[RMDB]
RNA sequence: GGGAACGACUCGAGUAGAGUCGAAAAAAUGAACAUACACAGCUCCUAAAUCUGCUUCACUCUGGCCCCCUUUCCUGGGGGAAACAGUGUUUGGAGAAGCACACUUUAUGUCAUUCAACAGAUAUUGAUCAGCUACCAUAUACCAUGCACUGUACCACUCAGGAAAAUAGUUCGCUAUUUUCCUGAGAAAAGAAACAACAACAACAAC
Reactivity to 2A3 in 0.01 (KOAc 150mM, MgCl2 10mM, bicine 150mM(pH8.5), 24C), signal-to-noise 4, nucleotides 027 to 156: a010a020u140g010a050a030c020a020u150a020c070a000c010a090g020c030u040c030c030u080a080a100a110u050c040u070g040c040u040u030c010a030c050u020c040u050g300g000c020c000c010c000c020u020u090u090c020c080u040g000g000g000g010g010a000a050a010c010a000g010u000g030u030u040u080g040g020a060g000a010a010g030c040a030c000a010c040u070u150u100a080u120g050u030c030a060u060u120c040a090a090c030a080g070a090u060a080u170u130g070a080u090c060a020g030c020u030a080c010c070a030u060a020u020a150c010c020a010u040g010c030a010c050u040g030u090a030c000c080a040
Reactivity to DMS in 0.01 (KOAc 150mM, MgCl2 10mM, bicine 150mM(pH8.5), 24C), signal-to-noise 1, nucleotides 027 to 156: a030a080u010g000a040a080c070a090u020a100c020a100c060a120g020c040u000c020c020u000a120a100a110u000c050u000g000c010u000u000c050a050c040u000c030u020g000g050c000c000c000c020c020u000u000u000c200c150u010g000g040g020g080g000a040a030a020c000a030g040u000g010u000u040u000g020g010a080g000a120a050g080c040a060c050a080c050u000u000u000a080u000g000u000c010a190u000u010c040a110a110c080a050g020a060u010a160u020u000g000a080u000c030a100g000c010u000a080c030c010a080u000a080u000a070c000c010a060u000g020c010a080c060u000g050u000a050c030c010a150